[RMDB]
RNA sequence: GGGAACGACUCGAGUAGAGUCGAAAAUCAAUUUUCAGGGAUAGGGAGGAUCAUGAAGGAAGACCUGAGAGCUGAUUCAUGGAAGCCUAUUUUGCCAAGUUUUGCUCUUAGAGUAUGAAUGAGCAGAACAUCAUGCCAUAUUCGUAUGGCAUGAUGUAAAAGAAACAACAACAACAAC
Reactivity to DMS in 0.01 (KOAc 150mM, MgCl2 10mM, bicine 150mM(pH8.5), 24C), signal-to-noise 5, nucleotides 027 to 126: u000c080a060a050u000u000u010u000c050a070g010g010g000a090u000a090g020g000g010a080g000g010a080u000c060a070u010g010a080a050g000g010a110a070g020a090c030c040u000g000a090g010a070g020c060u010g010a130u000u000c060a070u010g010g000a090a130g010c050c060u000a090u000u000u010u010g020c050c040a050a170g000u000u000u000u000g010c010u000c010u000u010a110g010a120g010u000a070u010g010a080a050u000g000a060g010c030a040g000a020
Reactivity to 2A3 in 0.01 (KOAc 150mM, MgCl2 10mM, bicine 150mM(pH8.5), 24C), signal-to-noise 3, nucleotides 027 to 126: u030c000a030a040u040u050u070u110c040a060g000g000g010a040u070a020g060g040g010a050g000g030a040u100c030a060u090g070a020a020g090g040a040a020g020a060c020c060u080g020a040g010a010g070c040u030g030a070u080u030c070a040u100g050g060a080a020g000c000c000u050a140u070u110u090u060g050c010c010a070a010g010u000u000u030u030g010c000u000c000u040u090a080g010a040g190u120a130u220g050a090a040u080g010a030g000c010a010g010a020

This 177-nucleotide RNA was probed chemically with DMS and 2A3. The DMS profile rests on 5,516 reads. The 2A3 profile rests on 3,298 reads. The data come from the RNA Mapping Database (RMDB), library OK2TRN. DMS adducts were read by reverse transcription with MarathonRT.